RNA sequence: GGGAACGACUCGAGUAGAGUCGAAAAUGUCAUGAGCGCGGCGGCCGGCUUUGCGUACGGCCUCAGCCGGGGCGCCACCCUGGUCGUGGGGGACAUCUCCUUCCUGCACGAUGUCAACGGCCUCAACGAACAGAGAUAGGUUCGCCUAUCUCUGUUCAAAAGAAACAACAACAACAAC
Reactivity to 2A3 in 0.01 (KOAc 150mM, MgCl2 10mM, bicine 150mM(pH8.5), 24C), signal-to-noise 4, nucleotides 027 to 126: u140g050u060c050a080u130g070a070g100c090g010c070g090g010c020g000g030c030c010g000g010c030u030u090u130g050c070g040u080a140c110g130g010c000c010u020c000a010g000c000c000g010g000g040g130c000g000c000c010a020c010c000c000u020g000g020u020c030g000u040g010g010g010g050g000a010c000a020u000c040u050c010c010u030u030c000c010u030g010c060a040c090g010a030u020g010u030c030a020a010c010g000g000c000c030u050c030a100a100c090
Reactivity to DMS in 0.01 (KOAc 150mM, MgCl2 10mM, bicine 150mM(pH8.5), 24C), signal-to-noise 5, nucleotides 027 to 126: u000g010u010c100a100u010g010a120g020c070g040c060g010g020c030g020g030c010c050g010g000c020u000u000u010g010c130g020u000a080c170g000g000c030c030u000c130a080g010c000c010g000g000g000g020c020g000c030c050a220c020c010c020u000g010g010u000c010g020u010g010g010g000g010g010a020c050a030u000c030u010c090c080u010u010c010c010u000g010c080a110c160g000a030u000g010u000c030a260a070c030g000g000c010c020u010c170a080a130c190